[RMDB]
RNA sequence: GGGAACGACUCGAGUAGAGUCGAAAAAGCGAGAUCGGUGACCAGCAGGUCGAAAUCGACGUCGAGGGACUGCUCGAUCACCUGCGAGGCGAUGACGAUGUGCCGCUGGGGGCGCCGCACGGCCCUGUCCGGAGCACCGAACCGGUCGAGCAGCUCGCACAAGACUGUCUUUCGAGACAGUCUUGUGAAAAGAAACAACAACAACAAC
Reactivity to 2A3 in 0.01 (KOAc 150mM, MgCl2 10mM, bicine 150mM(pH8.5), 24C), signal-to-noise 1, nucleotides 027 to 156: a010g000c020g000a000g010a000u000c000g000g170u080g160a210c000c000a000g030c000a000g010g110u130c150g040a090a000a200u030c040g000a060c010g030u060c030g080a130g080g220g010a100c100u180g010c190u010c010g040a030u020c020a000c000c000u050g050c090g020a180g000g050c100g030a060u300g020a020c060g100a130u100g000u010g000c010c040g110c050u000g010g000g000g000g000c110g010c020c000g080c000a020c120g000g000c020c000c020u020g080u060c000c000g040g000a050g070c000a000c000c000g000a000a030c000c000g010g000u020c000g000a020g050c010a000g000c020u030c010g010

About this RNA
An RNA of 207 nucleotides, treated with 2A3 and read out base by base. The RNA was probed in 150 mM KOAc, 10 mM MgCl2 and 150 mM bicine (pH 8.5) at 24 C. The 2A3 profile rests on 513 reads.